[RMDB]
RNA sequence: GGGAACGACUCGAGUAGAGUCGAAAACUCUGUUUCGACAGAGCAUCUUCCUAAGUCUGCGGGGAGCCUCCGAAGAACGCAAGGUUUCGGAAACGAAACUGAUGACCGGGAGGAGGUGAAAGACGCAGAUAUGGAGCGGCCGUACCUUCGGGUACAAUUAUUAUCUGACAUUCGUGUCAGAUAAUAAAAAAGAAACAACAACAACAAC
Reactivity to DMS in 0.01 (KOAc 150mM, MgCl2 10mM, bicine 150mM(pH8.5), 24C), signal-to-noise 3, nucleotides 027 to 156: c030u000c010u010g010u000u000u000c240g030a130c030a030g000a040g040c010a140u000c050u000u000c000c010u000a080a210g010u000c010u000g010c000g000g000g010g020a300g010c020c000u000c010c010g010a210a190g040a130a110c050g010c020a110a300g000g020u000u000u010c000g010g020a120a130a280c000g000a010a000a020c010u000g010a140u000g000a130c250c040g000g020g020a300g020g020a020g010g030u000g000a100a070a130g020a170c000g010c010a000g010a030u000a100u030g010g010a140g010c090g010g010c080c070g000u000a020c000c000u000u010c250g020g030g070u000a010c030a050a090
Reactivity to 2A3 in 0.01 (KOAc 150mM, MgCl2 10mM, bicine 150mM(pH8.5), 24C), signal-to-noise 2, nucleotides 027 to 156: c010u030c020u000g020u020u110u050c120g080a020c030a070g050a030g040c010a090u040c030u160u090c000c000u030a130a060g020u000c000u000g000c010g000g030g020g060a050g020c000c000u000c000c010g120a200a050g010a100a020c020g020c050a050a130g000g000u000u010u010c010g020g020a060a040a050c010g000a000a010a000c010u040g060a170u160g030a080c050c070g010g000g010a050g000g000a000g000g000u040g050a110a040a000g110a020c010g000c000a000g010a000u020a030u060g010g000a040g030c120g090g010c070c070g000u010a000c000c000u030u080c250g140g000g010u020a010c000a010a020
Background
Source: RMDB library RNAMAK, as collected in RNAgym. An RNA of 207 nucleotides, treated with DMS and 2A3 and read out base by base. DMS adducts were read by reverse transcription with MarathonRT. The 2A3 profile rests on 5,466 reads.